RNA sequence: GGGAACGACUCGAGUAGAGUCGAAAACUCUGGUGAGGCCCUAUCUAGUAUAGCAAUCCACCAAGCAGGUGAGUUCACACAAUUCAGGUUCUCAGAGAAAAUGCGCCCUGACUUGACAGGUAUGGUCCCUAUUAGUAAUGUUCGCAUUACUAAUAGGAAAAGAAACAACAACAACAAC
Reactivity to DMS in 0.01 (KOAc 150mM, MgCl2 10mM, bicine 150mM(pH8.5), 24C), signal-to-noise 8, nucleotides 027 to 126: c030u000c020u010g010g000u010g000a100g000g000c170c170c020u010a040u000c040u030a090g000u030a060u010a030g010c100a040a150u020c050c000a040c020c010a050a120g020c140a090g000g020u000g010a080g000u000u000c050a080c110a150c100a060a070u010u010c060a070g000g020u010u010c000u010c020a090g020a130g010a090a060a100a060u020g000c060g000c300c010c010u000g000a080c060u010u000g010a090c050a040g010g020u010a050u010g000g010u010c110
Reactivity to 2A3 in 0.01 (KOAc 150mM, MgCl2 10mM, bicine 150mM(pH8.5), 24C), signal-to-noise 9, nucleotides 027 to 126: c010u010c020u040g060g050u100g040a080g040g030c010c010c000u010a040u010c040u030a050g090u090a070u030a080g030c050a040a050u040c010c000a010c010c000a060a020g100c070a040g040g050u040g040a080g030u060u070c040a030c000a010c020a130a090u110u090c030a030g050g010u110u030c030u000c020a030g050a000g070a090a070a030a040u120g020c040g030c010c000c000u030g040a070c030u050u060g020a020c010a040g030g060u080a070u100g050g010u030c000
The record gives the reactivity of an RNA of 177 nucleotides to DMS and 2A3. High DMS reactivity at an A or C suggests that its Watson-Crick edge is free. Conditions: 150 mM KOAc, 10 mM MgCl2 and 150 mM bicine (pH 8.5), 24 C. The DMS profile rests on 17,677 reads. For 2A3, 21,289 sequencing reads were counted. Source: RMDB library OK1LIB, as collected in RNAgym.